[RMDB]
The data come from the RNA Mapping Database (RMDB), library RSTRND. An RNA of 207 nucleotides, treated with DMS and 2A3 and read out base by base. Conditions: 150 mM KOAc, 10 mM MgCl2 and 150 mM bicine (pH 8.5), 24 C.
RNA sequence: GGGAACGACUCGAGUAGAGUCGAAAACUGCGAGCCGAGAGGCGAUCUCGUAAACACGCACUUAAAUAUAACUGGCAAAACUAACAGUUUUAACCAAAACGUAGCAUUAGCUGCCUAAUAAGCGCAGCGAGCUCUUCCUGACAUUGCCUAUGUGUCUACAAUUUACUAGGUUCGCCUAGUAAAUUGUAAAAGAAACAACAACAACAAC
Reactivity to DMS in 0.01 (KOAc 150mM, MgCl2 10mM, bicine 150mM(pH8.5), 24C), signal-to-noise 1, nucleotides 027 to 156: c010u000g010c050g000a100g080c070c030g040a160g010a050g050g030c090g010a090u000c000u000c040g010u020a070a150a130c050a070c020g030c000a040c070u020u000a070a170a160u030a090u000a050a070c100u000g030g000c000a090a060a000a110c050u000a060a080c040a110g030u010u010u010u000a090a230c130c060a040a030a040a130c050g040u000a070g000c030a100u010u000a230g040c030u000g010c050c040u010a070a100u000a050a050g020c040g050c010a180g050c030g010a060g000c020u000c030u000u000c020c030u000g020a040c130a030u000u010g020c030c050u000a140u010g020u020g000u000c010u000
Reactivity to 2A3 in 0.01 (KOAc 150mM, MgCl2 10mM, bicine 150mM(pH8.5), 24C), signal-to-noise 6, nucleotides 027 to 156: c030u030g030c040g050a020g060c040c000g010a020g010a020g060g000c030g050a140u020c010u000c010g160u160a050a030a020c030a010c040g020c010a070c070u170u160a070a200a040u230a080u040a100a060c040u020g060g000c040a050a050a030a070c060u080a070a030c030a070g000u000u000u020u120a040a060c050c030a050a040a010a040c080g060u090a020g020c010a050u090u030a040g010c000u010g010c010c020u130a270a220u190a300a050g020c100g000c080a010g000c000g000a010g010c000u000c010u070u040c010c000u000g020a020c010a040u050u100g090c020c020u130a110u160g040u010g020u010c020u010

2A3 adducts were read by reverse transcription with SuperScript II with manganese.
Values are in units of 0.01, from 0 to 300, in steps of 10.